[RMDB]
RNA sequence: GGGAACGACUCGAGUAGAGUCGAAAACUUUGACAAGUUCGCUUGUCAAAGAAAAACCGUAGGAACCAACGAACUCAUCGAUCGUAAAUUCGAAAGAGUUUACGGGAGAGUCGUUGUUCCUAAACGGAAAAAAUCCCAUGUAUUCGUACAUGGGAAAGUUGAACACCUGAUUCGUCAGGUGUUCAACAAAAGAAACAACAACAACAAC
Reactivity to 2A3 in 0.01 (KOAc 150mM, MgCl2 10mM, bicine 150mM(pH8.5), 24C), signal-to-noise 2, nucleotides 027 to 156: c000u020u000u000g000a010c000a020a000g000u030u090c170g160c200u000u000g000u000c010a000a000a000g010a050a050a000a010a000c020c000g010u020a020g010g010a010a030c170c030a020a000c040g020a130a050c040u040c030a220u280c150g100a050u030c000g010u000a010a000a020u020u010c030g020a100a080a040g000a020g000u010u000u000a000c000g000g010g010a080g000a000g010u000c010g000u010u000g000u000u000c000c000u000a050a070a000c020g000g000a150a040a000a000a050a020u030c000c000c000a000u000g000u000a050u000u160c300g020u030a000c000a000u000g000g000g090a030a030a030
Structure probing data (2A3) for a 207-nucleotide construct. The reactions ran in a buffer of 150 mM KOAc, 10 mM MgCl2 and 150 mM bicine (pH 8.5), at 24 C. Reactivities are rounded to 0.1 and cut off at 0 and 3. Source: RMDB library RNAMAK, as collected in RNAgym.